[RMDB]
RNA sequence: GGGAACGACUCGAGUAGAGUCGAAAAAUGAGCACUACAUUCGCAUUUUCCCUCUCUCUAAACAGAGAAGGAGCAGUCCGAGAGACGGCGCCUUUGUCUCUUACAACGGGUGUCGGAGCUACACACAUGCCUAAUCGAGGUUCGCCUCGAUUAGGCAAAAAGAAACAACAACAACAAC
Reactivity to 2A3 in 0.01 (KOAc 150mM, MgCl2 10mM, bicine 150mM(pH8.5), 24C), signal-to-noise 2, nucleotides 027 to 126: a020u190g000a010g030c030a000c010u090a000c040a190u080u080c040g000c030a040u020u090u190u110c000c020c000u030c000u000c000u000c000u070a130a200a040c060a130g010a040g010a090a020g010g020a050g020c060a010g020u060c040c030g040a040g020a010g000a050c010g000g030c050g100c020c030u210u100u080g070u000c010u000c000u000u050a060c020a100a030c050g030g000g000u040g030u030c000g000g000a050g010c010u080a060c070a010c040a000c000a090
Reactivity to DMS in 0.01 (KOAc 150mM, MgCl2 10mM, bicine 150mM(pH8.5), 24C), signal-to-noise 1, nucleotides 027 to 126: a000u000g000a190g000c000a000c000u000a000c140a150u000u130c080g000c040a120u000u000u000u000c000c010c120u000c030u030c000u000c000u000a000a070a220c300a150g000a020g020a030a070g000g030a110g000c030a010g000u000c070c080g000a040g000a060g010a070c040g050g000c110g000c000c000u030u030u000g000u050c200u000c020u030u010a000c070a080a050c300g000g020g000u000g000u030c010g000g000a050g000c000u000a030c110a000c290a070c230a040
This 177-nucleotide RNA was probed chemically with 2A3 and DMS.
It was measured as part of the RMDB library OK1LIB.
Reactivities are rounded to 0.1 and cut off at 0 and 3.
The RNA was probed in 150 mM KOAc, 10 mM MgCl2 and 150 mM bicine (pH 8.5) at 24 C.
For DMS, 1,033 sequencing reads were counted.
For 2A3, 1,048 sequencing reads were counted.
DMS adducts were read by reverse transcription with MarathonRT.